Background
Structure probing data (2A3) for a 207-nucleotide construct. Conditions: 150 mM KOAc, 10 mM MgCl2 and 150 mM bicine (pH 8.5), 24 C. Values cover nucleotides 27 to 156. The 2A3 profile rests on 595 reads. The data come from the RNA Mapping Database (RMDB), library M2RFPK.
[RMDB]
RNA sequence: GGGAACGACUCGAGUAGAGUCGAAAACGUCCUAUGCGGAAGUUCGUGCUUCCGUCGAACGCGAAAGUCGGACGGCGGCCAUGAGUCGCAACGCAAAGCCGCGGCAAGUGGAGUUAGCGAGAAGAGAAAAAGUCACGAGUGUUCGCACUCGUGACAACACCUAGUCCAACUUCGGUUGGACUAGGUGAAAAGAAACAACAACAACAAC
Reactivity to 2A3 in 0.01 (KOAc 150mM, MgCl2 10mM, bicine 150mM(pH8.5), 24C), signal-to-noise 1, nucleotides 027 to 156: c010g060u020c000c010u040a060u250g020c010g000g080a010a010g100u180u300c070g060u300g060c010u040u000c000c000g020u000c020g050a060a050c070g000c010g190a300a020a010g090u120c020g000g000a020c010g020g000c000g000g000c040c000a090u080g060a120g000u000c010g000c050a050a040c050g000c190a130a140a000g040c090c000g030c050g010g000c000a140a000g020u010g030g000a050g040u160u050a020g040c010g060a000g000a070a080g020a060g060a030a020a050a040a000g000u010c000a000c000g000a010g000u010g000u000u080c180g010c080a020c000u000c000g000u010g000a000c000a000a000